[RMDB]
RNA sequence: GGGAACGACUCGAGUAGAGUCGAAAACUCAAUGUAGGGAAUAACAUUGAAUUGAUACAAAUACCUUUUUCGGUGUAGGGAAAGACACCGAAUUGAUACAAAUACCUUUCUCAAUGUAGGGAAUAACAAAACAGGCAUCGCUUCGGCGAUGCCUGAACAUACACAUCCAGUUCGCUGGAUGUGUAUGAAAAGAAACAACAACAACAAC
Reactivity to 2A3 in 0.01 (KOAc 150mM, MgCl2 10mM, bicine 150mM(pH8.5), 24C), signal-to-noise 9, nucleotides 027 to 156: c010u010c020a010a040u050g040u080a110g050g110g100a130a180u130a120a020c010a010u010u020g020a070a070u090u130g060a070u130a200c080a050a150a040u170a100c020c000u080u060u010u020u020c010g000g000u000g010u010a040g000g010g030a060a060a010g030a000c000a000c000c010g010a010a010u020u050g010a000u030a050c050a020a100a020u110a100c000c010u020u070u030c030u020c030a060a120u170g040u120a070g000g020g080a050a120u120a140a040c090a050a060a020a020c010a000g010g000c000a000u000c010g020c020u060u090c230g040g000c000g000a000u000g000c000c000u000g000a000a000
Reactivity to DMS in 0.01 (KOAc 150mM, MgCl2 10mM, bicine 150mM(pH8.5), 24C), signal-to-noise 3, nucleotides 027 to 156: c040u000c040a080a090u000g000u000a050g020g020g000a140a130u000a090a080c010a040u000u000g000a040a050u000u000g010a020u000a090c040a000a200a060u010a030c010c010u000u000u000u000u000c000g040g020u000g010u000a140g080g020g000a190a110a150g000a070c000a020c000c010g020a020a010u000u010g010a040u000a040c030a020a120a070u000a020c020c000u000u000u000c120u000c010a020a000u000g010u010a090g010g020g000a110a040u000a060a090c050a050a050a040a130c000a000g000g020c000a010u000c010g050c000u000u010c300g030g030c010g000a010u010g010c020c000u000g000a000a050